[RMDB]
RNA sequence: GGGAACGACUCGAGUAGAGUCGAAAAUCCGAACAGGGCGCAAUAAGUCGCAGGUACUGGACCCGAAGCGGAGGUGACCUACCCUUGGCCAGGUUGAAGCAUGGGUAAAACCAUGUGGAGGACCGAACCUAUAUUACUGCUUCGGCAGUAAUAUAGGAAAAGAAACAACAACAACAAC
Reactivity to DMS in 0.01 (KOAc 150mM, MgCl2 10mM, bicine 150mM(pH8.5), 24C), signal-to-noise 4, nucleotides 027 to 126: u000c010c010g010a070a080c070a210g000g010g020c070g000c070a110a080u010a080a050g000u010c070g010c130a070g010g000u000a060c040u000g000g000a090c020c020c030g010a110a120g000c050g010g010a050g010g010u010g010a070c040c040u010a100c040c010c040u000u000g000g000c030c080a140g000g010u000u000g000a240a200g000c000a000u000g000g000g010u000a060a060a140a210c010c000a000u000g010u000g010g000a190g000g000a040c010c020g010a090a190
Reactivity to 2A3 in 0.01 (KOAc 150mM, MgCl2 10mM, bicine 150mM(pH8.5), 24C), signal-to-noise 3, nucleotides 027 to 126: u000c000c000g010a040a030c060a070g040g070g000c020g010c070a060a250u170a300a040g050u090c020g050c130a040g070g060u060a050c030u080g070g040a120c000c000c000g040a050a000g040c040g020g030a000g020g040u050g040a080c000c010u070a060c020c000c000u060u110g100g000c030c020a060g030g000u020u050g000a010a010g000c000a000u020g020g000g030u040a010a020a010a020c000c000a000u000g020u020g000g020a030g080g040a000c010c010g010a010a010
Overview
Conditions: 150 mM KOAc, 10 mM MgCl2 and 150 mM bicine (pH 8.5), 24 C. An RNA of 177 nucleotides, treated with DMS and 2A3 and read out base by base. For DMS, 3,234 sequencing reads were counted. Source: RMDB library RFMREP, as collected in RNAgym.